[RMDB]
Source: RMDB library M2RFPK, as collected in RNAgym. The record gives the reactivity of an RNA of 207 nucleotides to DMS and 2A3. For DMS, 2,114 sequencing reads were counted.

RNA sequence: GGGAACGACUCGAGUAGAGUCGAAAAGAUUCCUCGUUGUUGAGCGAGGUUUAAACAAAUCGACCACACAAACGUAGAGCCGAGUACGGAUUUAUAAAUUAAGGCAUUAAGUGUGAUAAGGAGACAAAAAACGAUGUUGUGUUCGCACAACAUCGAACUAGUCAAGAUGGUUCGCCAUCUUGACUAGAAAAGAAACAACAACAACAAC
Reactivity to DMS in 0.01 (KOAc 150mM, MgCl2 10mM, bicine 150mM(pH8.5), 24C), signal-to-noise 2, nucleotides 027 to 156: g000a300u020u000c000c010u000c030g020u010u000g000u000u010g000a090g010c020g020a080g020g040u000u000u010a010a090a060c110a100a130a130u000c060g000a050c000c010a060c010a180c020a160a150a150c080g020u000a130g000a070g020c000c020g000a140g000u000a190c010g040g000a100u000u010u000a130u000a040a080a160u000u010a090a190g000g070c030a180u000u000a070a060g040u000g010u010g000a100u000a080a040g030g020a200g000a090c030a020a000a020a070a050a160c030g000a000u000g020u000u000g010u000g000u000u000c300g050c010a010c000a020a010c000a020u030c000g000a010a140
Reactivity to 2A3 in 0.01 (KOAc 150mM, MgCl2 10mM, bicine 150mM(pH8.5), 24C), signal-to-noise 5, nucleotides 027 to 156: g070a100u140u110c000c000u000c000g000u000u010g000u000u000g000a010g000c000g010a000g000g020u060u150u070a000a000a000c040a010a000a000u000c000g020a020c000c000a000c000a000c010a060a260a000c030g070u060a020g020a020g070c010c000g020a030g060u060a020c050g030g000a020u050u300u040a100u090a060a080a030u140u050a060a010g000g050c010a010u100u130a090a060g000u020g000u000g030a010u030a030a050g140g010a080g010a030c110a060a080a010a010a000a070c020g010a000u000g000u000u000g000u000g020u050u070c160g020c060a000c000a000a000c000a000u000c000g000a000a010

2A3 adducts were read by reverse transcription with SuperScript II with manganese.